[RMDB]
RNA sequence: GGGAACGACUCGAGUAGAGUCGAAAAGCUGCGUGAAACCUCGCUGUUUUCUUGGAUAACUUUCAGCGAGGUGAGGCAAGGCGGCAAAAAAAAGUUGGGAGCAGCAACGGCAAGCAAAAAAAAAGUUACAAGUUGCGAUGGUUCGCCAUCGCAACAACGCUAUAGGAGAGUUCGCUCUCCUAUAGCGAAAAGAAACAACAACAACAAC
Reactivity to 2A3 in 0.01 (KOAc 150mM, MgCl2 10mM, bicine 150mM(pH8.5), 24C), signal-to-noise 1, nucleotides 027 to 156: g010c010u050g010c030g120u070g040a120a010a000c000c000u000c000g000c000u000g000u000u010u010u000c040u050u150g150g020a130u010a040a010c000u000u000u000c000a000g000c000g010a000g000g000u000g000a000g000g020c070a050a020g030g000c020g000g000c050a110a020a000a020a000a000a020a020g090u090u050g000g020g010a020g010c030a010g000c040a080a000c030g050g010c020a030a030g020c040a070a030a040a010a000a000a000a000a080g010u000u020a030c020a100a070g000u020u000g000c020g000a000u000g010g060u040u060c110g020c140c000a000u000c000g000c010a000a000c000a000a000